The record gives the reactivity of an RNA of 207 nucleotides to DMS and 2A3.
For 2A3, 6,160 sequencing reads were counted.
2A3 adducts were read by reverse transcription with SuperScript II with manganese.
Reactivities are given for positions 27 through 156.
The reactions ran in a buffer of 150 mM KOAc, 10 mM MgCl2 and 150 mM bicine (pH 8.5), at 24 C.
The data come from the RNA Mapping Database (RMDB), library M2RFPK.
RNA sequence: GGGAACGACUCGAGUAGAGUCGAAAAAGCGCGCAUACUACGGUAUGCCCGCAAUCAGAAAUCGGGAAUGAUGUUCUCCCCUGGGAUUCCAAAACCGCUGUUUCGCUGAUGACGUCUGCUUUUUUAAUCACCACCGUUUGGUUCGCCAAACGGUGAAGCUAUGCUAUAACUUCGGUUAUAGCAUAGCAAAAGAAACAACAACAACAAC
Reactivity to DMS in 0.01 (KOAc 150mM, MgCl2 10mM, bicine 150mM(pH8.5), 24C), signal-to-noise 2, nucleotides 027 to 156: a130g030c000g040c130g000c020a040u000a020c000u020a090c270g080g000u000a030u000g000c000c010c000g060c010a070a100u010c070a150g000a050a100a080u010c050g020g010g010a090a120u000g010a090u010g000u000u000c050u000c000c020c000c070u040g020g060g010a170u000u000c040c030a050a050a100a080c040c030g010c040u010g050u000u000u000c030g010c050u030g020a130u000g000a060c070g030u040c050u010g020c000u000u000u010u020u000u010a050a180u010c040a130c060c000a010c000c000g010u000u000u010g020g010u000u010c300g000c000c000a020a010a000c000g000g020u000g000a020a050
Reactivity to 2A3 in 0.01 (KOAc 150mM, MgCl2 10mM, bicine 150mM(pH8.5), 24C), signal-to-noise 6, nucleotides 027 to 156: a000g010c000g000c020g000c010a000u010a000c000u010a010c130g080g000u000a000u000g000c030c040c000g020c010a010a040u100c040a020g150a070a120a040u130c060g020g000g030a040a100u080g060a060u070g090u120u040c030u040c020c000c020c010u050g040g010g060a120u120u090c040c000a050a060a030a060c020c030g020c070u030g060u040u080u070c060g000c030u050g010a030u040g030a030c030g030u020c020u030g070c020u100u070u010u010u020u140a100a110u090c050a020c060c000a010c000c000g000u000u000u000g030g000u030u020c190g000c060c000a000a000a000c000g000g000u000g000a000a000